[RMDB]
RNA sequence: GGGAACGACUCGAGUAGAGUCGAAAACUCAAUCUUUAGCUGUAACCCUGAUUGAUAUAAUUACAAAGGCUGAGAACGACCACCUCAAUGAGAUCAAAGCUGUAGAGAGUGACGAUGACAUCAGUAAUAAAUCGUAUGGAUUCGUCCAUACGAUUUAAAAAGAAACAACAACAACAAC
Reactivity to 2A3 in 0.01 (KOAc 150mM, MgCl2 10mM, bicine 150mM(pH8.5), 24C), signal-to-noise 3, nucleotides 027 to 126: c000u010c020a040a100u020c030u060u190u180a000g050c020u020g010u130a110a110c010c000c030u030g010a060u030u020g020a010u060a020u050a290a090u110u060a060c060a100a140a010g060g000c040u030g020a020g020a120a040c050g050a070c000c020a030c010c020u030c020a050a200u120g020a060g010a080u130c020a050a070a030g000c020u010g030u070a020g030a010g010a000g090u030g010a030c050g040a070u050g030a020c000a070u060c010a040g080u080a040a100
Reactivity to DMS in 0.01 (KOAc 150mM, MgCl2 10mM, bicine 150mM(pH8.5), 24C), signal-to-noise 7, nucleotides 027 to 126: c060u000c020a100a120u000c030u000u010u000a070g020c040u010g010u010a110a120c090c040c020u000g000a080u010u000g010a090u000a070u010a090a080u000u010a100c090a090a140a110g000g000c030u000g000a100g020a110a110c070g010a070c070c020a060c060c020u000c050a050a080u010g000a060g010a050u010c100a050a110a070g000c040u000g010u000a080g000a090g000a060g010u000g010a080c110g000a070u000g010a070c090a080u000c040a050g010u000a070a100